[RMDB]
RNA sequence: GGGAACGACUCGAGUAGAGUCGAAAAGUGCUAUUAAUGCGGCUUCAAAAGGGGCUGUCCAAAAAGAGUCAGAUGAGUAUAUUCUGGCUAAAGGGCCGUUACAAGUAGGAGAUUCAGUUCUCUUGCAUAAGAGGCCGCUUCGGCGGCCUCAAAAGAAACAACAACAACAAC
Reactivity to 2A3 in 0.01 (KOAc 150mM, MgCl2 10mM, bicine 150mM(pH8.5), 24C), signal-to-noise 1, nucleotides 027 to 129: g050u000g000c000u000a000u130u080a270a020u130g000c000g000g000c000u060u050c110a100a000a000a130g090g000g000g000c000u000g000u190c000c040a020a000a000a000a000g220a000g060u000c000a000g000a000u040g000a000g240u070a120u030a220u160u000c030u000g000g090c000u040a090a070a010g000g000g040c030c000g000u010u010a100c000a070a070g090u000a000g000g000a030g000a000u240u030c070a080g300u140u010c000u000c000u000u010g020c000a000u010a300a110
Reactivity to DMS in 0.01 (KOAc 150mM, MgCl2 10mM, bicine 150mM(pH8.5), 24C), signal-to-noise 2, nucleotides 027 to 129: g030u000g060c000u000a300u080u000a160a000u040g000c070g000g000c000u110u000c130a140a030a130a300g060g080g010g000c030u050g020u100c100c000a080a140a160a140a090g010a110g080u060c000a010g020a000u010g020a210g000u070a140u080a000u060u000c000u100g030g030c030u000a040a130a030g040g000g040c010c020g000u000u150a040c040a140a110g050u030a050g000g000a000g000a010u030u000c300a170g030u050u010c070u050c000u080u000g030c020a030u040a030a130